[RMDB]
RNA sequence: GGGAACGACUCGAGUAGAGUCGAAAAACGACACCAAGAGUUGGCUGAUAGCGACAUGAAAAGGACACGAACAGACACCGAAAGGAAAGCAGGUAGGGCAUGCAGACGCUUGUAGAAAGUUCGUUCAAAUGUUGUAGAUCUUCGGAUCUACAACAUUAAAAGAAACAACAACAACAAC
Reactivity to DMS in 0.01 (KOAc 150mM, MgCl2 10mM, bicine 150mM(pH8.5), 24C), signal-to-noise 8, nucleotides 027 to 126: a090c080g010a150c120a060c030c040a060a110g010a140g010u010u000g010g000c040u010g000a060u000a090g010c050g010a070c060a050u020g000a050a050a080a090g000g010a060c090a070c030g010a050a060c060a070g010a090c090a150c010c020g000a070a090a100g000g000a040a080a050g010c040a030g000g010u010a060g000g000g010c050a050u020g000c050a050g010a070c090g000c030u000u000g000u000a120g010a070a070a070g000u000u000c060g000u010u010c070a060
Reactivity to 2A3 in 0.01 (KOAc 150mM, MgCl2 10mM, bicine 150mM(pH8.5), 24C), signal-to-noise 5, nucleotides 027 to 126: a000c030g020a020c010a010c030c020a070a010g060a030g090u050u080g090g030c050u070g020a030u050a090g060c020g010a020c020a080u080g050a060a010a030a040g030g000a040c030a000c140g060a100a020c040a040g050a050c030a020c030c010g040a060a030a010g030g000a090a020a000g050c050a000g050g000u110a070g050g010g000c070a040u120g010c000a010g000a040c030g010c040u050u060g030u030a030g110a070a050a030g010u040u030c050g000u040u020c020a020
Conditions: 150 mM KOAc, 10 mM MgCl2 and 150 mM bicine (pH 8.5), 24 C. The record gives the reactivity of an RNA of 177 nucleotides to DMS and 2A3. The data come from the RNA Mapping Database (RMDB), libraries RFM100 and RFMREP. For 2A3 the reverse transcriptase was SuperScript II with manganese.